[RMDB]
RNA sequence: GGGAACGACUCGAGUAGAGUCGAAAAUUAGAGGUCUCGAUCACAGCGAGAGCGGGAGAGACGCUCCCGGGCCGGGUUAGGAACCGGUGCGGCGGGUGGUAUAGGAGCCGGCCGGACCCGGGGAUAAUAAGUUUGAUGGAUUCGUCCAUCAAACUUAAAAAGAAACAACAACAACAAC
Reactivity to DMS in 0.01 (KOAc 150mM, MgCl2 10mM, bicine 150mM(pH8.5), 24C), signal-to-noise 1, nucleotides 027 to 126: u010u000a080g000a160g010g000u000c010u000c010g020a210u010c080a110c120a160g000c070g000a180g000a170g020c050g020g000g010a260g010a090g000a060c060g040c050u000c010c000c010g030g010g020c020c000g000g000g030u000u020a150g050g020a140a200c030c000g010g030u000g020c070g010g010c020g000g000g030u000g010g000u010a080u020a140g020g000a200g070c000c000g010g000c020c000g020g000a060c030c000c000g000g000g000g010a030u010a020a150